[RMDB]
RNA sequence: GGGAACGACUCGAGUAGAGUCGAAAAAGGUCUCACCCUCCCACCCUGGCUGGAGUGCAGUGGCACGAUCAUGGCUGACUGCAGCCUCAACCUUCCAGGCUCAAGCGAUUUUCCCAUGUAGCCUCCUAGGUAGCUGAGACCACAGGCACACACCACACAAAUAGAUGUUCUUCGGAACAUCUAUUUGAAAAGAAACAACAACAACAAC
Reactivity to 2A3 in 0.01 (KOAc 150mM, MgCl2 10mM, bicine 150mM(pH8.5), 24C), signal-to-noise 3, nucleotides 027 to 156: a010g040g000u030c040u020c040a030c030c000c030u030c000c010c030a040c000c000c020u020g020g000c020u030g030g030a050g030u090g000c030a020g050u090g070g040c080a030c200g070a080u170c060a120u170g020g000c030u050g110a100c020u050g030c030a050g040c000c000u070c030a050a080c000c020u050u000c030c010a010g010g000c010u040c080a080a020g050c030g060a060u110u010u060u050c000c020c010a010u070g030u030a030g000c000c000u020c010c040u020a030g000g020u030a050g010c040u030g000a000g040a030c020c010a020c020a020g040g020c000a020c000a000c000a030c030c070a030c000a010
Reactivity to DMS in 0.01 (KOAc 150mM, MgCl2 10mM, bicine 150mM(pH8.5), 24C), signal-to-noise 2, nucleotides 027 to 156: a080g010g020u000c020u000c010a080c040c030c000u000c010c010c000a140c150c020c020u000g000g030c050u000g010g000a060g010u000g000c000a090g010u010g000g060c040a070c080g010a110u000c110a180u000g030g010c050u000g000a080c080u000g000c000a050g050c000c000u010c050a060a060c020c000u000u000c020c010a080g020g010c010u000c060a130a110g020c030g000a150u000u000u000u000c040c020c010a170u020g040u000a060g000c000c000u020c010c030u000a070g010g030u000a080g010c030u000g000a070g020a020c020c030a030c050a060g010g010c060a080c020a110c050a120c030c000a060c130a180
This 207-nucleotide RNA was probed chemically with 2A3 and DMS.
For 2A3 the reverse transcriptase was SuperScript II with manganese.
For DMS the reverse transcriptase was MarathonRT.
The data come from the RNA Mapping Database (RMDB), library OK3TST.
2A3 is a SHAPE reagent: it acylates the 2'-hydroxyl of flexible nucleotides of all four kinds.
The reactions ran in a buffer of 150 mM KOAc, 10 mM MgCl2 and 150 mM bicine (pH 8.5), at 24 C.
For 2A3, 2,077 sequencing reads were counted.